[RMDB]
RNA sequence: GGGAACGACUCGAGUAGAGUCGAAAAGCGCGGUGAUGCCGACGGCGGUGACGGUGUCCGCCGAGAGCCCGGGCGGCGUGGUGGCCGGGUUCUUCCGCGACCUGGCCCGAAUCCAGCAGGUCGCGCAGUCGUCACUAUGAUUCGUCAUAGUGACGACAAAAGAAACAACAACAACAAC
Reactivity to 2A3 in 0.01 (KOAc 150mM, MgCl2 10mM, bicine 150mM(pH8.5), 24C), signal-to-noise 1, nucleotides 027 to 126: g060c050g000c030g020g030u100g040a100u140g040c040c040g040a040c020g050g000c000g000g050u070g050a060c060g060g000u100g020u080c020c060g000c010c000g020a040g000a000g030c000c030c000g000g060g020c020g000g020c030g020u030g030g040u070g010g060c030c010g000g030g000u020u020c000u120u060c040c050g030c010g000a000c000c000u050g060g010c000c020c000g010a030a050u030c040c020a020g040c010a010g050g000u000c000g000c000g000c010a000
Reactivity to DMS in 0.01 (KOAc 150mM, MgCl2 10mM, bicine 150mM(pH8.5), 24C), signal-to-noise 2, nucleotides 027 to 126: g000c080g030c050g030g000u010g030a090u020g010c020c020g020a170c070g010g010c000g000g010u020g000a090c060g020g010u000g010u010c030c080g010c030c020g000a050g000a130g010c010c030c020g020g000g010c020g020g020c060g030u000g010g030u020g000g000c010c020g010g000g010u000u000c020u010u010c150c070g020c040g010a020c000c000u000g010g010c020c050c050g010a100a070u000c080c090a120g000c020a020g000g020u000c010g010c010g010c240a060
An RNA of 177 nucleotides, treated with 2A3 and DMS and read out base by base. For DMS the reverse transcriptase was MarathonRT. For 2A3 the reverse transcriptase was SuperScript II with manganese.